Chemical mapping of a 177-nucleotide RNA with DMS and 2A3. The reactions ran in a buffer of 150 mM KOAc, 10 mM MgCl2 and 150 mM bicine (pH 8.5), at 24 C. The data come from the RNA Mapping Database (RMDB), library VIROID. For DMS, 3,013 sequencing reads were counted. The 2A3 profile rests on 1,901 reads. DMS adducts were read by reverse transcription with MarathonRT.
[RMDB]
RNA sequence: GGGAACGACUCGAGUAGAGUCGAAAAGGCGGGCCCUCCGAUCCGAGGGGCCCGACGCCCUGAUUGGAGGGCACUCCGGGCCGAAGGGUUGAGUAGCACUCAGAGGGAGAAAAUCACACAGAGAUGACACAUUUCUAAUGUUCGCAUUAGAAAUGUGAAAAGAAACAACAACAACAAC
Reactivity to DMS in 0.01 (KOAc 150mM, MgCl2 10mM, bicine 150mM(pH8.5), 24C), signal-to-noise 4, nucleotides 027 to 126: g020g040c070g010g000g000c010c000c000u010c020c060g000a050u000c060c270g000a130g020g010g010g010c000c040c130g010a020c120g010c000c010c000u000g000a070u000u010g030g010a050g010g010g010c010a030c020u000c050c110g000g010g020c030c030g000a150a120g010g010g000u000u000g000a050g020u000a090g010c040a300c040u010c030a060g000a080g010g020g000a090g000a070a040a090a080u000c060a060c110a090c100a070g000a080g000a080u020g000a280
Reactivity to 2A3 in 0.01 (KOAc 150mM, MgCl2 10mM, bicine 150mM(pH8.5), 24C), signal-to-noise 2, nucleotides 027 to 126: g050g040c040g020g020g050c000c000c020u000c020c040g010a060u050c060c040g120a080g010g050g030g030c000c020c030g030a020c040g000c000c000c060u020g040a120u010u150g080g060a010g000g000g030c020a000c010u100c030c000g040g020g000c020c030g060a050a050g040g020g000u010u030g010a020g030u060a040g030c050a000c050u020c020a000g030a020g050g050g000a040g080a040a060a040a050u120c020a040c000a010c020a070g090a000g030a140u130g020a060